RNA sequence: GGGAACGACUCGAGUAGAGUCGAAAACGACCUUAAACAGUUCUGGUGGUGCUCUGAAUGGAGUGCUCUACUGAGAUUAUAAAAUAGAAGGUAAGCUAUUCUCUCUUACAACAGGGCAGGGCUUGUUAAAAGCCUUUCAGUUUCGACUGAAAGGCAACCAUAGCAGAUCCUUCGGGAUCUGCUAUGGAAAAGAAACAACAACAACAAC
Reactivity to 2A3 in 0.01 (KOAc 150mM, MgCl2 10mM, bicine 150mM(pH8.5), 24C), signal-to-noise 1, nucleotides 027 to 156: c020g030a030c000c000u080u190a110a270a000c010a080g010u080u030c000u080g000g030u070g030g020u060g000c010u010c020u030g190a150a150u260g020g000a030g000u010g030c050u010c020u050a080c040u020g030a000g000a030u120u200a060u210a100a170a100a030u130a020g070a030a000g070g010u020a020a000g010c020u030a110u180u080c030u000c000u050c000u000u090a060c030a200a080c020a050g020g000g030c050a010g070g000g000c070u000u020g000u060u090a110a240a030a030g000c000c010u000u000u000c000a000g000u000u000u100c100g020a050c000u000g000a000a000a000g000g000c000a000a000
Structure probing data (2A3) for a 207-nucleotide construct. The data come from the RNA Mapping Database (RMDB), library M2RFPK. The RNA was probed in 150 mM KOAc, 10 mM MgCl2 and 150 mM bicine (pH 8.5) at 24 C. For 2A3, 382 sequencing reads were counted.